The data come from the RNA Mapping Database (RMDB), library OK3TST. This 207-nucleotide RNA was probed chemically with DMS and 2A3. 2A3 adducts were read by reverse transcription with SuperScript II with manganese.
RNA sequence: GGGAACGACUCGAGUAGAGUCGAAAAAUACAGAAGAUGUGAACCUCCAAACCCCAGACACCCACUUGGUGCAUCAGGUGUCAGACGAUCAGGUUACAGGUGUACAGGGACUGGGGCAACAAGCUGCCCCAAACAGGCCAAAUUACAUUGGCUUUAGCAACUUAUACCCGUUCGCGGGUAUAAGUUGAAAAGAAACAACAACAACAAC
Reactivity to DMS in 0.01 (KOAc 150mM, MgCl2 10mM, bicine 150mM(pH8.5), 24C), signal-to-noise 1, nucleotides 027 to 156: a140u000a190c010a070g020a110a090g030a190u000g040u010g010a160a090c030c000u000c050c020a040a070a190c030c010c000c010a300g050a140c060a060c000c010c020a070c090u000u000g020g040u020g040c030a110u000c170a090g060g040u010g030u010c000a110g000a060c040g020a080u000c010a060g050g020u000u000a070c070a040g000g000u010g060u000a000c110a060g020g030g010a100c070u000g020g020g090g030c000a050a140c120a070a200g000c250u000g040c030c000c000c020a000a010a140c070a110g010g000c010c030a010a040a180u010u020a090c090a160u000u030g000g000c010u020u000u000a130g050
Reactivity to 2A3 in 0.01 (KOAc 150mM, MgCl2 10mM, bicine 150mM(pH8.5), 24C), signal-to-noise 1, nucleotides 027 to 156: a010u180a010c040a020g070a050a020g020a140u070g070u060g080a060a090c000c010u090c070c020a090a140a160c000c010c010c000a010g030a150c000a040c000c030c000a050c030u020u080g000g020u040g050c050a060u050c070a040g070g060u030g090u070c090a030g030a070c140g000a030u130c050a040g030g030u000u060a040c030a040g030g000u050g030u050a030c010a010g040g010g040a010c070u010g010g000g000g000c000a010a010c010a010a030g000c100u040g000c000c020c020c000a020a030a020c080a030g050g000c000c000a000a070a000u250u110a070c110a140u000u020g020g010c000u030u000u000a020g000
DMS adducts were read by reverse transcription with MarathonRT. The reactions ran in a buffer of 150 mM KOAc, 10 mM MgCl2 and 150 mM bicine (pH 8.5), at 24 C.